The data come from the RNA Mapping Database (RMDB), library OK3TST. The record gives the reactivity of an RNA of 207 nucleotides to 2A3 and DMS. For 2A3 the reverse transcriptase was SuperScript II with manganese. For 2A3, 2,089 sequencing reads were counted.
RNA sequence: GGGAACGACUCGAGUAGAGUCGAAAAAAAUGACCUAGUCUCGGGUAUGUCUUUAUUAGUACCCUGAAAAUGGACCAAUACACUGUCUAUUAGUUCUGCUUUCUUCUUUACUACCUUCAUCUUUAGCAGGCUUUUUAUAAGUAGUGUCAAUAUGUCAGAAACAUUAUCUUUUCGAAGAUAAUGUUUCAAAAGAAACAACAACAACAAC
Reactivity to 2A3 in 0.01 (KOAc 150mM, MgCl2 10mM, bicine 150mM(pH8.5), 24C), signal-to-noise 2, nucleotides 027 to 156: a000a010a020u090g010a030c010c000u010a030g040u040c040u020c060g010g000g010u040a050u060g050u010c060u030u220u030a110u050u030a060g020u030a040c000c030c000u040g050a080a080a010a030u100g060g000a010c030c020a020a040u050a110c030a000c020u020g040u150c040u040a030u040u020a060g040u290u170c000u000g020c000u020u100u120c040u170u020c020u180u300u080a110c060u150a120c050c000u130u170c060a130u140c120u140u190u030a010g000c000a020g000g020c000u170u110u030u110u120a110u010a060a030g010u000a020g020u020g010u040c020a030a060u090a070u270g070u120c020a040
Reactivity to DMS in 0.01 (KOAc 150mM, MgCl2 10mM, bicine 150mM(pH8.5), 24C), signal-to-noise 2, nucleotides 027 to 156: a090a070a110u000g000a250c010c020u010a090g030u000c040u010c040g040g030g020u000a010u000g000u010c090u000u000u000a120u040u000a150g020u000a040c010c000c000u010g010a030a040a040a100u000g010g000a030c030c040a060a110u000a050c030a100c090u000g010u000c030u000a100u010u000a050g020u010u020c030u000g010c020u010u000u010c020u000u010c030u010u000u000a050c040u010a050c040c000u020u000c030a060u000c030u010u000u000a050g020c030a050g020g000c040u000u000u000u000u000a050u010a050a060g000u000a040g010u000g000u000c050a060a090u000a080u000g010u010c050a170